[RMDB]
RNA sequence: GGGAACGACUCGAGUAGAGUCGAAAACGAAAGUCGUGUCUCGCAUCGAAAUCGACGCCAGCGCGGACUUGUUCGACGAGUAGACGUGUCGCUAACGUCGAUCUCGAUGGGCAGUCCUGUCCGCUCGGAGGCGAGCUAUAUUCGUAUAGCUCGCCUCAAAAGAAACAACAACAACAAC
Reactivity to DMS in 0.01 (KOAc 150mM, MgCl2 10mM, bicine 150mM(pH8.5), 24C), signal-to-noise 3, nucleotides 027 to 126: c040g000a120a140a080g010u000c020g070u000g000u000c010u010c060g040c140a030u000c040g000a070a090a090u000c030g020a040c050g030c070c100a030g020c030g020c080g000g000a040c010u000u000g010u000u010c040g000a090c040g010a010g010u000a140g000a030c040g040u000g010u010c270g030c150u000a090a020c000g000u000c000g010a090u000c000u000c010g000a060u000g000g010g000c020a040g010u000c020c030u020g010u010c100c040g000c040u000c120g000
Reactivity to 2A3 in 0.01 (KOAc 150mM, MgCl2 10mM, bicine 150mM(pH8.5), 24C), signal-to-noise 3, nucleotides 027 to 126: c020g010a050a040a060g050u060c030g020u050g210u030c030u020c080g060c030a110u080c040g050a110a090a000u070c010g000a020c030g020c050c030a010g010c000g000c000g030g050a030c030u050u120g040u100u080c060g050a070c030g000a020g000u030a010g040a010c020g060u030g040u080c100g000c210u060a020a000c000g000u000c000g010a090u070c010u000c000g060a090u040g010g030g000c020a020g020u080c020c000u050g000u020c000c020g000c050u040c050g060

The record gives the reactivity of an RNA of 177 nucleotides to DMS and 2A3. The 2A3 profile rests on 3,178 reads. For DMS the reverse transcriptase was MarathonRT. It was measured as part of the RMDB library OK2TST. Values are in units of 0.01, from 0 to 300, in steps of 10. The reactions ran in a buffer of 150 mM KOAc, 10 mM MgCl2 and 150 mM bicine (pH 8.5), at 24 C.